[RMDB]
This 177-nucleotide RNA was probed chemically with 2A3 and DMS. The 2A3 profile rests on 1,509 reads. Reactivities are given for positions 27 through 126. For 2A3 the reverse transcriptase was SuperScript II with manganese. DMS adducts were read by reverse transcription with MarathonRT.
RNA sequence: GGGAACGACUCGAGUAGAGUCGAAAAUGGAGGGUAGCAUAGGGUAUCACCCAAUUGCCACUCCUUUGAUCCCGCGACACUACUAGAAGCCUAAAGUUCGCGGUUGGCCCUACUAAUCGGCAUCGCAACGGAUAUAUCCCUUCGGGGAUAUAUCCGUAAAAGAAACAACAACAACAAC
Reactivity to 2A3 in 0.01 (KOAc 150mM, MgCl2 10mM, bicine 150mM(pH8.5), 24C), signal-to-noise 3, nucleotides 027 to 126: u080g000g000a000g020g040g040u090a000g020c060a030u030a040g050g000g000u080a100u260c120a100c000c000c020a000a020u150u020g000c000c000a110c070u100c000c000u020u000u050g000a000u010c010c000c010g000c000g010a020c010a000c090u120a000c000u070a080g040a130a000g080c010c010u020a070a100a060g020u040u010c000g000c010g050g010u020u090g120g010c040c000c000u050a100c050u080a120a140u100c050g000g020c030a020u020c050g010c110a090
Reactivity to DMS in 0.01 (KOAc 150mM, MgCl2 10mM, bicine 150mM(pH8.5), 24C), signal-to-noise 3, nucleotides 027 to 126: u040g020g000a030g020g020g050u000a050g000c030a020u020a170g000g030g030u020a250u040c290a140c030c000c000a170a180u050u000g000c000c040a220c000u030c010c000u000u000u000g010a200u030c060c000c000g020c020g000a020c180a020c030u020a120c140u000a090g020a160a080g040c050c000u020a040a100a110g000u040u000c020g010c010g000g010u010u000g000g000c000c010c040u000a050c120u040a130a130u000c190g010g000c040a070u000c030g010c110a100